[RMDB]
RNA sequence: GGGAACGACUCGAGUAGAGUCGAAAAGUAUUAGGGUGUUGAAACCCGAAUGCGUAAUGAAAGUGAAUUUCAGAUGUGAUCCGCAAGGUGCAACAUCGACCAGUCUGGAUCAUUUAUGUGAAGGUACCCAAGAUCGAAAGUUCGCUUUCGAUCUUGGAAAAGAAACAACAACAACAAC
Reactivity to DMS in 0.01 (KOAc 150mM, MgCl2 10mM, bicine 150mM(pH8.5), 24C), signal-to-noise 2, nucleotides 027 to 126: g010u000a010u000u000a140g000g010g020u000g020u010u000g000a130a170a040c000c000c000g020a040a040u000g010c000g000u000a090a080u000g010a040a030a060g010u010g000a120a130u010u000u000c020a080g020a040u000g020u010g010a080u000c010c010g030c210a090a080g000g020u000g020c240a070a060c180a050u000c050g010a120c080c020a070g000u000c100u000g000g000a010u000c020a030u000u000u000a030u000g010u010g000a260a140g010g000u010a100c110
Reactivity to 2A3 in 0.01 (KOAc 150mM, MgCl2 10mM, bicine 150mM(pH8.5), 24C), signal-to-noise 1, nucleotides 027 to 126: g010u030a090u010u000a000g000g000g010u020g020u080u090g030a100a070a000c000c000c000g000a000a010u030g000c020g110u100a040a070u110g070a040a020a060g070u080g080a100a180u020u080u050c010a020g010a140u020g020u050g010a000u000c000c010g060c030a070a120g080g000u050g040c060a090a070c030a130u080c060g000a030c000c000a010g050u000c050u100g000g000a000u000c000a070u040u150u120a120u060g020u020g010a130a000g020g010u060a040c000